Structure probing data (DMS and 2A3) for a 177-nucleotide construct. The DMS profile rests on 3,384 reads. DMS adducts were read by reverse transcription with MarathonRT. The RNA was probed in 150 mM KOAc, 10 mM MgCl2 and 150 mM bicine (pH 8.5) at 24 C. 2A3 adducts were read by reverse transcription with SuperScript II with manganese. The data come from the RNA Mapping Database (RMDB), library OK2TRN. Reactivities are given for positions 27 through 126.
[RMDB]
RNA sequence: GGGAACGACUCGAGUAGAGUCGAAAAAAGAAAUUGUGCAUGUCUAAGCUAGGCUCUUGGUGUCAAAUGGUUUCACUGAUUGGUGCGGAAUUAUCAGCAUCAGUUAAACAGCAUGUGGGGAAAGGACGCUAGUAGUGGUUUUCGAACCACUACUAGCAAAAGAAACAACAACAACAAC
Reactivity to DMS in 0.01 (KOAc 150mM, MgCl2 10mM, bicine 150mM(pH8.5), 24C), signal-to-noise 3, nucleotides 027 to 126: a050a090g000a070a070a070u000u000g030u000g000c050a070u000g010u000c050u000a050a050g020c080u000a110g000g000c060u000c040u000u010g000g020u010g020u000c070a070a070a080u010g000g010u000u000u000c060a070c100u000g000a020u010u000g020g020u000g030c010g010g010a070a100u010u010a090u000c020a080g010c010a010u000c020a010g000u000u000a040a030a070c180a050g020c060a040u000g020u000g010g000g000g010a040a040a070g000g010a110c170
Reactivity to 2A3 in 0.01 (KOAc 150mM, MgCl2 10mM, bicine 150mM(pH8.5), 24C), signal-to-noise 2, nucleotides 027 to 126: a000a000g140a030a070a010u110u110g010u010g000c030a030u030g050u020c040u080a010a000g000c020u030a060g050g010c020u050c010u110u080g040g020u030g030u070c010a020a030a090u060g020g050u040u060u060c030a040c030u000g020a060u050u040g000g030u050g000c050g000g090a110a060u280u110a160u230c010a010g020c000a010u010c000a000g020u030u030a030a190a030c020a020g050c010a030u070g030u080g020g000g010g040a060a070a060g060g000a020c070